[RMDB]
RNA sequence: GGGAACGACUCGAGUAGAGUCGAAAAGAAUUCCUGGAGAACUGUCUUCGUGAGAAGCUGGAAAUAUUUCUUUCAAUUCCAUCUCUUAGUUUUCCAUUUUGUUGUGUUUCAGAGGAACAUCAAGAAAGAUAAGGAACUAGUUCGCUAGUUCCUUAUCAAAAGAAACAACAACAACAAC
Reactivity to DMS in 0.01 (KOAc 150mM, MgCl2 10mM, bicine 150mM(pH8.5), 24C), signal-to-noise 2, nucleotides 027 to 126: g000a250a300u000u010c050c040u000g010g010a050g010a060a030c020u010g000u010c030u000u000c070g000u010g000a140g000a020a030g020c200u000g000g000a030a080a090u010a060u000u010u010c110u010u010u010c100a130a130u000u010c040c010a030u010c080u010c050u000u010a030g010u000u000u000u000c000c000a160u000u010u000u020g000u010u020g010u010g010u010u010u000c000a140g000a140g010g010a040a070c110a080u000c070a080a080g000a100a100a090